[RMDB]
RNA sequence: GGGAACGACUCGAGUAGAGUCGAAAAAGAUGAACAGGAUGCCGAAUCUGAAGAGGUCCAGGCAGAUAGAGCCGUCAGCCCUGUUCCUACCGUGGACAGAUCCAGCCCGGUCAAGCACAGCAAGUCAUAACGACUGGAAAUUCGUUUCCAGUCGUUAAAAAGAAACAACAACAACAAC
Reactivity to 2A3 in 0.01 (KOAc 150mM, MgCl2 10mM, bicine 150mM(pH8.5), 24C), signal-to-noise 4, nucleotides 027 to 126: a020g090a090u090g010a020a020c010a030g010g070a060u110g010c030c010g040a040a050u060c080u070g050a070a010g100a030g080g020u050c070c040a040g020g000c000a000g010a060u150a060g100a020g050c010c020g070u050c020a030g030c030c000c000u020g020u040u020c000c000u020a040c010c020g040u150g020g000a030c040a070g040a050u040c010c010a000g000c000c000c000g000g020u020c050a070a010g020c050a040c010a070g050c040a100a040g030u050c010a040
Reactivity to DMS in 0.01 (KOAc 150mM, MgCl2 10mM, bicine 150mM(pH8.5), 24C), signal-to-noise 4, nucleotides 027 to 126: a090g030a090u010g010a060a050c070a060g020g020a120u010g000c030c040g010a120a080u010c020u010g000a100a080g010a100g020g000u010c050c020a110g000g000c010a020g010a140u020a070g010a100g000c050c040g010u000c040a070g000c040c020c030u010g000u020u000c020c030u000a050c090c080g010u010g010g000a110c070a070g000a100u010c050c030a110g000c040c010c010g000g010u020c120a080a080g000c070a060c070a050g000c090a040a100g000u010c100a140
Background:
Chemical mapping of a 177-nucleotide RNA with 2A3 and DMS. For 2A3, 3,657 sequencing reads were counted. DMS adducts were read by reverse transcription with MarathonRT. Conditions: 150 mM KOAc, 10 mM MgCl2 and 150 mM bicine (pH 8.5), 24 C.